[RMDB]
RNA sequence: GGGAACGACUCGAGUAGAGUCGAAAAUUGAGAUGAUCAUGAGGGGUGGCCAAUAAGCCUGAUGCAGGGAAUGAACAGGAAUUACAGCUGCAGAAAAAUAAUAUGGACAAAGAUUUGUGGCCUGGCUUAUUGUCCUUGCUCAGCCUUCCUUGUGUUAUAAAUUAUUAGCUUUCGAGCUAAUAAUUUAAAAAGAAACAACAACAACAAC
Reactivity to 2A3 in 0.01 (KOAc 150mM, MgCl2 10mM, bicine 150mM(pH8.5), 24C), signal-to-noise 2, nucleotides 027 to 156: u100u090g000a080g040a060u120g030a070u060c000a040u110g020a040g000g090g010g000u050g040g020c000c010a000a050u080a090a010g030c040c000u080g070a080u140g020c000a000g000g000g020a090a090u050g020a100a040c070a030g060g070a110a020u140u040a130c050a080g020c010u040g010c000a010g120a060a210a020a020a000u160a050a070u160a070u150g010g000a010c020a050a190a030g050a150u150u130u140g050u070g070g030c000c010u040g010g030c040u000u000a030u020u090g000u050c020c000u000u100g000c000u010c040a000g030c000c010u050u070c000c010u060u080g090u080g050u090u130a090
Reactivity to DMS in 0.01 (KOAc 150mM, MgCl2 10mM, bicine 150mM(pH8.5), 24C), signal-to-noise 1, nucleotides 027 to 156: u020u000g030a210g020a100u000g000a160u010c020a020u000g000a100g000g010g010g030u000g000g020c040c020a060a080u000a050a080g020c030c010u020g020a110u010g000c030a050g020g000g010a080a180u000g010a050a130c070a070g000g000a070a090u000u010a040c030a070g010c000u000g000c010a090g070a030a060a080a160a140u000a030a120u010a120u000g020g000a120c030a070a060a170g020a240u000u010u020g010u010g000g020c030c020u000g030g030c070u010u000a020u010u010g000u000c020c020u000u000g010c000u000c060a050g020c040c050u020u010c030c030u000u000g000u000g010u020u000a230